Structure probing data (2A3 and DMS) for a 207-nucleotide construct. The 2A3 profile rests on 898 reads. It was measured as part of the RMDB library M2RFPK.
RNA sequence: GGGAACGACUCGAGUAGAGUCGAAAAACCGGAGGCCGACAAUCCAGGGAACCGGAUGUCAUCACGUUGUUGCAAUACCAGAUGGCAUCUUAAAUCCGAUCUGCAAAUAAGCAUGUAGAAAGCUGAUAAAAUCACACACACUUCGGUGUGUGUGAAAGUCCAACUAUUUCUUCGGAAAUAGUUGGACAAAAGAAACAACAACAACAAC
Reactivity to 2A3 in 0.01 (KOAc 150mM, MgCl2 10mM, bicine 150mM(pH8.5), 24C), signal-to-noise 2, nucleotides 027 to 156: a020c020c000g000g020a050g050g030c030c040g050a060c070a080a030u050c030c050a050g020g000g020a050a060c030c010g010g000a000u000g020u000c010a000u010c050a050c200g030u030u070g060u000u050g090c130a120a050u110a210c020c020a040g000a020u000g000g000c000a000u020c000u000u020a080a050a000u010c020c000g050a060u000c000u020g000c000a090a030a140u100a060a100g090c050a030u070g010u070a040g060a050a100a000g020c060u100g000a010u090a100a100a020a030u060c000a000c000a000c000a010c000a000c010u030u080c170g130g010u010g000u000g000u000g000u000g000a010a000a000
Reactivity to DMS in 0.01 (KOAc 150mM, MgCl2 10mM, bicine 150mM(pH8.5), 24C), signal-to-noise 1, nucleotides 027 to 156: a070c040c010g000g020a120g000g030c030c030g010a090c060a130a090u000c050c020a070g000g000g000a120a130c060c110g000g030a060u010g000u000c000a010u020c030a280c140g020u000u040g030u000u030g000c040a060a140u000a050c050c060a170g000a020u000g010g070c030a030u010c000u000u010a060a070a150u010c050c030g000a150u000c020u010g010c070a050a070a120u010a110a150g020c090a070u000g030u010a040g000a040a070a080g030c000u010g020a110u010a090a070a130a220u010c010a000c010a030c030a000c000a010c010u010u030c300g000g070u000g010u000g010u000g030u000g010a000a010a030